Structure probing data (DMS and 2A3) for a 177-nucleotide construct. The RNA was probed in 150 mM KOAc, 10 mM MgCl2 and 150 mM bicine (pH 8.5) at 24 C. For 2A3 the reverse transcriptase was SuperScript II with manganese. Reactivities are given for positions 27 through 126.

[RMDB]
RNA sequence: GGGAACGACUCGAGUAGAGUCGAAAAGAUAUGGAUAUGUGUGUACAGCGAGGAUCUACGAUCGGAAACGAUCGUAGGGAGCUGACACCAUAUCCUAAGUCAAAAGUCGUAAACUUCGGUUUACGACGAACACCCAAAACUUCGGUUUUGGGUGUUCAAAAGAAACAACAACAACAAC
Reactivity to DMS in 0.01 (KOAc 150mM, MgCl2 10mM, bicine 150mM(pH8.5), 24C), signal-to-noise 3, nucleotides 027 to 126: g000a020u000a300u010g000g010a010u000a000u000g010u010g050u000g000u010a230c140a010g020c000g010a070g020g000a020u000c000u000a000c000g010a000u000c010g000g020a120a040a160c000g030a010u000c000g020u000a010g010g000g000a020g020c000u010g000a050c000a010c000c010a010u000a000u000c000c000u000a010a040g030u010c040a160a080a120a190g020u000c010g010u010a010a010a010c010u000u010c250g020g020u000u000u000a010c000g010a010c000
Reactivity to 2A3 in 0.01 (KOAc 150mM, MgCl2 10mM, bicine 150mM(pH8.5), 24C), signal-to-noise 2, nucleotides 027 to 126: g000a010u070a010u100g040g000a000u010a000u030g300u030g010u000g000u130a300c040a050g010c010g120a300g020g000a010u000c010u000a000c000g010a000u010c000g000g020a020a040a030c000g000a000u000c020g000u000a010g010g000g010a010g000c020u030g030a000c000a000c010c000a000u000a010u000c000c000u010a030a010g020u000c020a060a030a080a200g010u010c000g010u000a000a010a020c010u050u060c250g100g000u000u000u000a000c000g010a000c010